[RMDB]
RNA sequence: GGGAACGACUCGAGUAGAGUCGAAAAGCAGCCUUCAGAUUUUUUACCAAUGCUGCCUAAUGGCCAAACCCAACCUAGAGCCAAGCAGCAAGGGUGCUGGAGUCACACUGACACAUGGGGAUGGGGCACCGCAAUAAAAUUUCGAUUUUAUUGCGGUAAAAGAAACAACAACAACAAC
Reactivity to 2A3 in 0.01 (KOAc 150mM, MgCl2 10mM, bicine 150mM(pH8.5), 24C), signal-to-noise 5, nucleotides 027 to 126: g010c030a000g010c020c010u030u030c060a070g020a200u080u140u070u080u170u300a040c020c010a080a050u050g000c000u000g000c000c010u190a190a110u080g000g010c000c010a080a050a110c080c020c020a010a080c040c030u100a060g000a020g100c000c000a020a010g000c000a000g000c000a010a020g050g000g010u030g010c020u010g000g010a030g020u050c020a030c020a020c110u030g090a030c010a000c010a110u100g010g000g020g010a030u060g010g010g010g000c010
Reactivity to DMS in 0.01 (KOAc 150mM, MgCl2 10mM, bicine 150mM(pH8.5), 24C), signal-to-noise 7, nucleotides 027 to 126: g020c040a050g000c110c020u000u000c070a040g010a060u000u000u010u010u020u010a070c040c030a060a090u000g000c010u000g010c010c110u000a090a100u000g010g010c000c050a090a090a140c060c040c040a070a080c120c080u000a140g020a150g020c000c010a050a180g000c010a010g020c020a040a060g000g010g020u000g020c030u000g010g000a060g010u000c070a080c100a100c070u000g010a090c070a060c100a070u000g010g000g000g010a110u000g000g000g000g030c200